[RMDB]
RNA sequence: GGGAACGACUCGAGUAGAGUCGAAAAGCUAGCCUGCGCACGAUGAGACUGCCGUGACGUCUAGCCUGCGUCUCAACUAGUCUCCAUCAAUCAAAACGCAGGGAUUGAUGUACGAGACUAGUACACAGUGUAUUCACUUGUUCGCAGGUGGAUACACAAAAGAAACAACAACAACAAC
Reactivity to 2A3 in 0.01 (KOAc 150mM, MgCl2 10mM, bicine 150mM(pH8.5), 24C), signal-to-noise 9, nucleotides 027 to 126: g030c020u030a010g010c000c040u050g010c050g000c020a020c030g070a060u130g020a020g060a070c060u090g060c050c010g030u040g050a120c020g020u040c020u020a020g010c000c010u040g030c030g060u010c010u000c020a020a030c000u000a000g000u000c000u000c000c000a000u000c000a000a010u000c010a010a060a090a110c120g030c090a040g050g010g000a000u000u000g000a000u000g020u070a080c080g000a000g000a000c000u000a000g010u050a010c100a000c010a040
Reactivity to DMS in 0.01 (KOAc 150mM, MgCl2 10mM, bicine 150mM(pH8.5), 24C), signal-to-noise 9, nucleotides 027 to 126: g010c030u010a050g010c210c070u010g010c060g010c030a030c050g010a110u010g000a090g010a100c070u010g010c040c030g010u000g010a050c040g010u020c020u010a070g000c030c030u010g000c070g000u000c010u000c040a110a040c010u000a010g000u000c000u000c000c010a000u000c010a000a000u010c010a090a060a090a120c150g010c140a050g010g010g000a010u000u000g000a010u000g010u050a090c160g000a020g010a010c000u000a000g010u000a060c210a090c200a110
The data come from the RNA Mapping Database (RMDB), library OK1LIB. The record gives the reactivity of an RNA of 177 nucleotides to 2A3 and DMS. The RNA was probed in 150 mM KOAc, 10 mM MgCl2 and 150 mM bicine (pH 8.5) at 24 C.